[RMDB]
The data come from the RNA Mapping Database (RMDB), library OK3TST.
An RNA of 207 nucleotides, treated with 2A3 and DMS and read out base by base.
Conditions: 150 mM KOAc, 10 mM MgCl2 and 150 mM bicine (pH 8.5), 24 C.
For 2A3 the reverse transcriptase was SuperScript II with manganese.
RNA sequence: GGGAACGACUCGAGUAGAGUCGAAAAUGCACCACGUGCGGACGCUCAAGAUCAUGCUGAAGGUGUACUCCAGGGCCCUGCAGGAGGAGCUGCAGUUCAGCAGCAAGGCCAUUGGCCGCCUCUUCCCAUGCGCUGACGACCUGCUGGAGACGCACAAUCCUCGUCAUAAUUUCGAUUAUGACGAGGAAAAAGAAACAACAACAACAAC
Reactivity to 2A3 in 0.01 (KOAc 150mM, MgCl2 10mM, bicine 150mM(pH8.5), 24C), signal-to-noise 3, nucleotides 027 to 156: u070g000c000a030c040c020a070c080g020u000g000c030g000g020a020c040g000c030u060c080a070a120g020a210u130c050a090u150g020c030u090g060a080a010g040g000u010g040u090a100c010u020c020c010a010g010g010g020c020c000c010u020g000c020a020g030g040a030g010g030a020g020c020u010g000c020a120g050u120u140c040a020g010c000a020g000c040a050a090g030g000c020c010a170u100u260g000g010c000c010g020c000c010u030c000u050u040c000c010c010a070u070g000c030g000c030u060g060a040c070g100a140c010c010u060g030c030u010g090g000a000g030a020c020g010c000a010c000a060a040
Reactivity to DMS in 0.01 (KOAc 150mM, MgCl2 10mM, bicine 150mM(pH8.5), 24C), signal-to-noise 1, nucleotides 027 to 156: u020g060c020a120c030c080a080c080g000u000g010c020g030g000a070c080g000c060u030c060a050a110g000a120u000c060a100u000g040c020u000g010a090a030g000g030u000g010u000a020c010u000c000c020a090g020g010g000c040c020c000u030g000c050a110g000g000a080g040g000a130g040c000u010g010c020a060g010u000u000c090a150g010c000a060g040c050a090a050g050g010c010c010a220u000u000g050g050c000c000g000c020c070u000c100u010u000c000c000c030a140u000g010c040g030c030u010g030a140c010g000a050c010c000u010g020c050u000g020g000a050g000a110c000g000c020a030c010a040a300
For DMS, 2,261 sequencing reads were counted.